[RMDB]
RNA sequence: GGGAACGACUCGAGUAGAGUCGAAAAAUUUGGAAAUGCAAUUAGUAGGUUAUCAUUAUGGAUCAGAUGAAGAGUGCAAAAAAAGAGGAAAUUUUGGCCUAAGGAACUGAAGGAAUAAGACUUAGAGAACAGUGGGUAAGGAGCAUGUCUUAGAUGACAAAGUCUAGUGGUUCGCCACUAGACUUUGAAAAGAAACAACAACAACAAC
Reactivity to DMS in 0.01 (KOAc 150mM, MgCl2 10mM, bicine 150mM(pH8.5), 24C), signal-to-noise 1, nucleotides 027 to 156: a130u020u010u010g040g000a150a070a140u000g020c060a040a160u000u000a070g060u000a090g010g000u010u000a120u000c010a120u000u020a090u020g000g040a060u000c020a100g000a070u000g020a060a070g000a060g030u020g000c020a000a000a060a100a040a040a160g000a090g050g030a040a080a080u000u000u000u000g020g000c020c030u020a080a070g000g020a060a100c060u020g020a030a130g020g010a020a040u000a090a120g010a030c020u000u000a160g000a090g000a030a040c070a070g080u000g010g000g050u000a020a020g010g000a060g000c020a040u000g010u020c010u010u020a120g020a090u010g020a130
Reactivity to 2A3 in 0.01 (KOAc 150mM, MgCl2 10mM, bicine 150mM(pH8.5), 24C), signal-to-noise 2, nucleotides 027 to 156: a010u110u090u130g020g030a080a090a030u120g030c060a040a050u070u020a090g020u030a020g080g000u120u100a050u130c010a030u040u120a050u100g020g000a030u010c100a090g000a050u080g030a050a000g030a020g030u050g000c070a010a130a000a000a000a000a000g030a000g100g030a020a050a020u080u150u050u100g000g070c000c010u050a030a090g020g010a080a000c040u140g050a050a000g020g010a010a060u050a050a000g010a030c010u020u070a010g010a010g020a070a010c030a020g020u000g030g010g000u020a030a010g020g010a000g000c010a040u030g000u000c000u090u140a180g020a170u150g000a040

Background: Chemical mapping of a 207-nucleotide RNA with DMS and 2A3. The RNA was probed in 150 mM KOAc, 10 mM MgCl2 and 150 mM bicine (pH 8.5) at 24 C. It was measured as part of the RMDB library OK3TST. The 2A3 profile rests on 931 reads.